[RMDB]
The record gives the reactivity of an RNA of 177 nucleotides to DMS and 2A3. The 2A3 profile rests on 3,903 reads. For DMS the reverse transcriptase was MarathonRT. Conditions: 150 mM KOAc, 10 mM MgCl2 and 150 mM bicine (pH 8.5), 24 C.
RNA sequence: GGGAACGACUCGAGUAGAGUCGAAAAGAUAUGGAUCACUUGGGAGAGGUAGUAUCGGAAACGAUACUAAUAAGCCUCGAGGAUCAAGUGAGUCCUAAGUCAAAACGUAUCUGUUCGCAGAUACGAAUCACGAUAAUUCGUUCGCGAAUUAUCGUGAAAAAGAAACAACAACAACAAC
Reactivity to DMS in 0.01 (KOAc 150mM, MgCl2 10mM, bicine 150mM(pH8.5), 24C), signal-to-noise 1, nucleotides 027 to 126: g010a020u000a000u010g000g000a130u000c000a010c000u000u010g010g000g000a000g010a010g030g010u000a010g020u000a010u010c000g010g000a010a000a010c010g010a000u000a010c000u000a040a090u000a070a190g000c000c000u000c000g000a070g010g010a000u000c000a010a010g020u000g000a070g020u020c010c000u000a010a090g000u000c000a090a060a110a160c020g010u000a000u010c020u000g010u000u010c250g000c020a020g030a010u000a000c000g010a100a150
Reactivity to 2A3 in 0.01 (KOAc 150mM, MgCl2 10mM, bicine 150mM(pH8.5), 24C), signal-to-noise 2, nucleotides 027 to 126: g000a000u000a010u040g000g000a000u000c010a010c010u000u030g010g020g000a030g000a010g020g070u090a010g020u000a000u000c000g010g000a000a000a000c000g000a000u020a010c000u020a030a120u300a200a060g130c030c010u010c000g040a150g000g010a000u000c000a000a000g010u000g010a000g190u080c010c000u000a000a000g000u010c000a030a080a010a040c000g010u010a000u000c000u010g160u070u080c300g010c080a010g000a000u030a010c010g010a020a070